This 207-nucleotide RNA was probed chemically with DMS and 2A3.
RNA sequence: GGGAACGACUCGAGUAGAGUCGAAAACAAGAUUCGAACCAAACGUCGCUUUUUACAAGCAUGCAGACAAUGAAGAAUUAACUCUGUUAUAUGUGUUUAUUAACAGCACUAAACAUAAAGAUUUAACAACUGAUCGAACUAAAUGGACACAAGUACACAAAUUUAGUUGCUUCGGCAACUAAAUUUGAAAAGAAACAACAACAACAAC
Reactivity to DMS in 0.01 (KOAc 150mM, MgCl2 10mM, bicine 150mM(pH8.5), 24C), signal-to-noise 1, nucleotides 027 to 156: c040a160a160g000a260u000u030c040g060a060a180c010c060a050a140a130c100g050u000c110g030c080u000u030u030u000u000a040c060a000a190g110c100a050u000g000c080a080g010a100c110a160a190u030g010a180a110g060a140a090u000u000a030a160c090u000c090u000g000u000u000a050u000a080u000g000u010g000u000u020u040a110u010u030a080a190c050a030g060c030a080c160u030a000a080a000c100a000u060a050a130a150g000a130u010u000u000a010a100c050a050a060c060u000g010a020u000c060g000a050a240c030u000a110a020a050u000g000g000a170c060a080c060a060a030g050u000a060c050a060
Reactivity to 2A3 in 0.01 (KOAc 150mM, MgCl2 10mM, bicine 150mM(pH8.5), 24C), signal-to-noise 2, nucleotides 027 to 156: c030a050a050g010a150u090u080c030g060a060a040c010c020a130a010a030c020g050u050c060g040c010u030u090u060u140u270a110c090a070a000g010c020a020u100g010c040a030g020a070c020a010a130u100g020a090a120g020a010a070u070u060a050a030c020u030c020u090g040u140u020a120u040a090u210g000u000g030u050u070u000a180u050u110a160a020c030a060g000c010a000c030u050a100a040a050c010a030u150a070a100a010g070a060u030u060u140a020a110c060a030a030c030u030g040a070u050c020g020a020a020c000u080a070a060a070u100g070g010a000c040a000c000a040a050g050u100a020c090a000

Source: RMDB library OK3TST, as collected in RNAgym.
DMS adducts were read by reverse transcription with MarathonRT.
For 2A3, 917 sequencing reads were counted.
2A3 adducts were read by reverse transcription with SuperScript II with manganese.